[RMDB]
RNA sequence: GGGAACGACUCGAGUAGAGUCGAAAAGAAAGAAAAGAAACUACCGAUGAAGACCCGUAUUCUACGCCAGUACCACGGGACGGUUUUCGUACAGGCGAAGCACGAUGAAAGACAUCGUGCAAAGAAACACUAUUAUGGGUUUCGACCCAUAAUAGUGAAAAGAAACAACAACAACAAC
Reactivity to 2A3 in 0.01 (KOAc 150mM, MgCl2 10mM, bicine 150mM(pH8.5), 24C), signal-to-noise 8, nucleotides 027 to 126: g050a030a070a010g100a050a090a020a020g080a040a090a020c110u090a030c030c030g080a110u140g100a060a040g060a070c000c000c020g000u040a080u100u030c050u080a040c030g020c020c000a020g010u030a040c010c040a020c040g000g000g020a020c050g050g000u030u040u030u130c040g000u030a040c020a060g010g050c030g050a050a010g000c000a010c020g010a000u020g110a150a120a080g140a070c010a010u000c000g010u010g010c010a010a010a000g010a010a070a000
Reactivity to DMS in 0.01 (KOAc 150mM, MgCl2 10mM, bicine 150mM(pH8.5), 24C), signal-to-noise 6, nucleotides 027 to 126: g010a120a110a100g010a080a070a070a100g010a050a050a060c050u010a070c020c020g000a110u020g000a140a120g000a100c010c000c000g000u020a110u020u010c090u000a070c040g030c010c010a090g010u000a040c100c120a030c050g000g010g010a060c110g010g000u010u000u010u010c080g010u000a030c080a070g000g020c020g010a160a120g010c010a010c000g010a000u000g000a110a160a080g010a160c020a000u000c000g010u010g000c010a000a040a080g000a090a060a150